[RMDB]
The record gives the reactivity of an RNA of 177 nucleotides to DMS and 2A3. Reactivities are given for positions 27 through 126. The RNA was probed in 150 mM KOAc, 10 mM MgCl2 and 150 mM bicine (pH 8.5) at 24 C.
RNA sequence: GGGAACGACUCGAGUAGAGUCGAAAACAUCAGGAGGACCUUCCGCCCACUUCCAAGCAGGAGCUUUCCUUCCAAGCGCACUUCCAAUCUACUCGAGAGGAGGAGGAGGAGGAGGAUUCCCACAAAAACACAAAAUCGAAUUCGUUCGAUUUUGUGUAAAAGAAACAACAACAACAAC
Reactivity to DMS in 0.01 (KOAc 150mM, MgCl2 10mM, bicine 150mM(pH8.5), 24C), signal-to-noise 2, nucleotides 027 to 126: c160a050u000c060a090g010g000a150g000g000a100c260c040u000u010c020c040g000c020c000c030a090c120u000u000c040c030a120a110g000c100a040g010g000a060g020c070u000u000u000c010c020u000u030c020c040a090a110g020c080g000c090a060c120u000u000c010c030a090a160u000c010u000a030c030u040c020g000a040g040a210g000g000a080g000g000a110g010g010a110g020g000a120g020g010a050g000g000a200u000u000c010c010c000a120c220a020a050a100a090
Reactivity to 2A3 in 0.01 (KOAc 150mM, MgCl2 10mM, bicine 150mM(pH8.5), 24C), signal-to-noise 2, nucleotides 027 to 126: c010a070u150c060a050g060g050a010g000g020a080c000c020u060u000c040c040g000c000c020c020a110c060u130u020c030c040a090a030g010c030a020g040g050a020g030c010u070u110u030c010c010u120u060c020c020a080a010g070c040g000c050a030c020u060u030c000c010a040a080u000c000u040a070c020u000c030g020a030g000a050g080g020a010g030g020a020g060g030a020g000g010a040g000g000a000g010g010a080u000u000c010c010c010a070c000a020a080a000a040